[RMDB]
RNA sequence: GGGAACGACUCGAGUAGAGUCGAAAAUUAAAGUACGUAGAAGCGGCCUGAAGCAUGUAGAAAGCUUUGCGAGCAUAUCGAGCUACAUGUGAGCGAAAGCGGUUACGUACAACGAUAUGCAAAAAAACAUCCUACAUCUGUUCGCAGAUGUAGGAUGAAAAGAAACAACAACAACAAC
Reactivity to 2A3 in 0.01 (KOAc 150mM, MgCl2 10mM, bicine 150mM(pH8.5), 24C), signal-to-noise 2, nucleotides 027 to 126: u070u040a060a020a030g000u000a020c010g000u000a030g020a260a050g220c070g050g080c050c070u040g030a020a000g010c010a000u000g000u000a010g040a100a140a010g040c040u110u100u160g090c120g050a050g010c010a010u030a020u090c020g010a010g010c000u020a010c000a010u010g030u010g030a040g100c110g120a090a060a060g020c010g020g000u020u010a000c010g000u000a000c000a000a000c020g000a010u010a020u050g000c000a000a000a000a000a040a000a190
Reactivity to DMS in 0.01 (KOAc 150mM, MgCl2 10mM, bicine 150mM(pH8.5), 24C), signal-to-noise 3, nucleotides 027 to 126: u010u010a090a090a110g010u000a000c010g000u000a010g010a150a110g030c070g010g010c100c050u000g000a110a300g000c000a000u000g000u000a020g010a080a070a150g000c070u000u010u010g010c170g010a140g000c000a030u000a010u020c030g010a140g020c000u000a000c020a000u000g000u020g000a100g030c100g020a060a140a160g000c020g000g010u000u000a000c000g000u000a010c000a110a050c040g000a020u010a010u000g010c010a000a000a050a100a060a030a170